Chemical mapping of a 177-nucleotide RNA with DMS and 2A3. 2A3 adducts were read by reverse transcription with SuperScript II with manganese. The DMS profile rests on 3,559 reads. The RNA was probed in 150 mM KOAc, 10 mM MgCl2 and 150 mM bicine (pH 8.5) at 24 C. For DMS the reverse transcriptase was MarathonRT.

[RMDB]
RNA sequence: GGGAACGACUCGAGUAGAGUCGAAAACUUCGGUAUUUGCAUUGUUUAGGUACAGAAGACAGAAAAUGAACAAUGUUAAUCUCAUCCAAUCACAACUACAGUUUAUCAUUCCGGAAUGGCAACCGGACAUAUAUGGUGGCUUCGGCCACCAUAUAUGAAAAGAAACAACAACAACAAC
Reactivity to DMS in 0.01 (KOAc 150mM, MgCl2 10mM, bicine 150mM(pH8.5), 24C), signal-to-noise 3, nucleotides 027 to 126: c060u020u020c130g010g040u000a020u010u000u010g000c010a040u000u000g010u000u000u000a070g000g020u120a060c070a090g000a130a070g000a090c260a090g000a080a020a050a080u000g000a000a050c030a000a010u010g000u000u000a030a020u010c000u000c010a070u050c050c070a080a080u040c110a050c100a020a080c160u000a040c090a050g030u020u010u000a040u010c140a030u040u000c000c000g000g000a040a010u020g020g000c150a140a010c000c000g010g000a040
Reactivity to 2A3 in 0.01 (KOAc 150mM, MgCl2 10mM, bicine 150mM(pH8.5), 24C), signal-to-noise 4, nucleotides 027 to 126: c040u100u080c120g030g010u150a050u010u030u030g000c000a010u010u000g020u020u040u030a060g060g040u140a030c020a080g140a200a020g060a160c050a030g170a110a120a030a040u140g000a000a020c020a000a000u030g010u060u080a010a040u010c000u000c050a040u000c010c060a060a120u080c020a080c060a280a040c050u150a080c040a140g000u000u120u110a200u090c080a030u050u050c000c000g000g080a110a090u070g200g000c040a020a030c000c000g000g020a000